[RMDB]
RNA sequence: GGGAACGACUCGAGUAGAGUCGAAAAGAUAUGGAAUGUAGGGAGUCUACGCGAGUAUCGGAAACGAUACUCAGACGAGGAUCUAUUUUCCUAAGUCAAAACGGUGACCUGUUCGCAGGUCACCGAACAUGCCUUCCUAGUUCGCUAGGAAGGCAUGAAAAGAAACAACAACAACAAC
Reactivity to DMS in 0.01 (KOAc 150mM, MgCl2 10mM, bicine 150mM(pH8.5), 24C), signal-to-noise 3, nucleotides 027 to 126: g000a060u000a270u010g000g000a000a000u000g000u000a020g030g000g010a240g000u000c050u000a130c040g030c110g020a010g000u000a010u000c000g000g000a050a070a090c010g010a010u000a010c000u000c000a030g000a040c020g010a180g020g020a110u040c000u010a000u000u000u000u000c000c020u000a030a140g010u000c040a080a060a140a170c030g010g000u000g000a040c010c000u010g000u000u000c230g010c000a010g000g000u000c000a000c010c000g000a000a070
Reactivity to 2A3 in 0.01 (KOAc 150mM, MgCl2 10mM, bicine 150mM(pH8.5), 24C), signal-to-noise 2, nucleotides 027 to 126: g020a010u030a030u080g010g010a020a010u040g000u020a010g050g070g110a150g110u060c060u130a080c080g040c060g080a000g000u010a000u000c000g010g000a030a030a010c000g000a010u010a000c000u010c000a020g030a030c040g090a200g190g020a020u030c000u000a000u010u050u010u000c000c010u010a090a010g030u010c030a000a040a090a110c030g000g020u000g010a020c000c000u000g020u110u100c300g010c130a000g010g000u020c010a000c000c010g000a000a000
Chemical mapping of a 177-nucleotide RNA with DMS and 2A3. The 2A3 profile rests on 4,529 reads. For 2A3 the reverse transcriptase was SuperScript II with manganese. The data come from the RNA Mapping Database (RMDB), library TTRDEL. The reactions ran in a buffer of 150 mM KOAc, 10 mM MgCl2 and 150 mM bicine (pH 8.5), at 24 C.